[RMDB]
RNA sequence: GGGAACGACUCGAGUAGAGUCGAAAACUUCCACCGGCUCUCCCGACGCCUCGCGCUCGGUCGAGAGUCUACCUCCUCCCCGAGUCAACCCCCUGUGAUUGCCGAAAGGUUGGGUGAAAAGCGUAGCUCAAUAACGCGAUUUCGAUCGCGUUAUUGAAAAAGAAACAACAACAACAAC
Reactivity to DMS in 0.01 (KOAc 150mM, MgCl2 10mM, bicine 150mM(pH8.5), 24C), signal-to-noise 5, nucleotides 027 to 126: c190u010u010c020c030a120c170c060g000g010c020u010c000u000c000c010c010g000a030c090g020c010c070u040c300g010c090g010c080u000c010g010g000u010c100g010a030g010a030g010u010c020u020a110c080c010u000c020c010u020c000c000c020c020g000a030g030u010c020a110a280c070c010c010c030c030u000g010u000g000a090u010u000g000c030c010g010a060a110a070g000g010u000u000g000g030g020u010g010a030a060a070a100g010c110g030u030a070g010c120
Reactivity to 2A3 in 0.01 (KOAc 150mM, MgCl2 10mM, bicine 150mM(pH8.5), 24C), signal-to-noise 6, nucleotides 027 to 126: c010u070u010c010c030a070c040c030g000g000c000u000c000u010c000c010c000g010a030c100g020c000c100u170c160g060c030g010c030u000c000g000g050u090c070g000a010g000a000g010u000c000u010a010c000c000u030c000c010u040c000c010c000c000g010a000g010u000c000a020a090c000c000c020c020c000u010g040u050g100a140u070u150g020c010c000g080a110a040a030g090g000u050u060g000g000g020u050g030a060a050a010a000g080c080g040u080a010g030c010